The data come from the RNA Mapping Database (RMDB), library OK2TST.
Structure probing data (2A3 and DMS) for a 177-nucleotide construct.
For 2A3 the reverse transcriptase was SuperScript II with manganese.
RNA sequence: GGGAACGACUCGAGUAGAGUCGAAAAGACGACGACUGCACCGACUUUGCUCCUCUCACAGUCGGAUCGCGUGGCGACAGCCUUCGCGAUGAUCAGGAAGUACUCGUCCCAGUCAGGCCGGCUCACGGUUCGUACUCGAUUUCGAUCGAGUACGAACAAAAGAAACAACAACAACAAC
Reactivity to 2A3 in 0.01 (KOAc 150mM, MgCl2 10mM, bicine 150mM(pH8.5), 24C), signal-to-noise 2, nucleotides 027 to 126: g000a000c020g010a010c010g010a030c040u040g000c070a020c060c000g020a010c010u060u030u020g010c010u050c050c000u030c000u020c010a020c020a030g000u000c000g000g020a000u000c010g040c010g000u020g010g000c020g060a090c150a080g000c020c000u190u160c030g000c000g000a000u020g020a090u130c060a010g040g090a070a020g010u080a110c030u020c020g010u000c010c000c010a020g040u060c020a000g000g110c010c010g010g010c030u060c030a050c060g040
Reactivity to DMS in 0.01 (KOAc 150mM, MgCl2 10mM, bicine 150mM(pH8.5), 24C), signal-to-noise 3, nucleotides 027 to 126: g010a070c040g030a070c070g010a110c020u000g020c130a300c050c040g020a030c010u000u000u000g010c090u010c010c040u010c030u000c050a090c090a050g010u000c030g000g020a030u000c010g000c000g000u010g000g000c020g020a200c300a120g000c000c000u000u010c010g000c020g010a010u000g000a130u010c040a080g010g010a120a090g010u010a100c060u000c030g000u000c010c020c010a110g000u020c070a070g000g000c070c000g010g000c040u010c070a090c130g000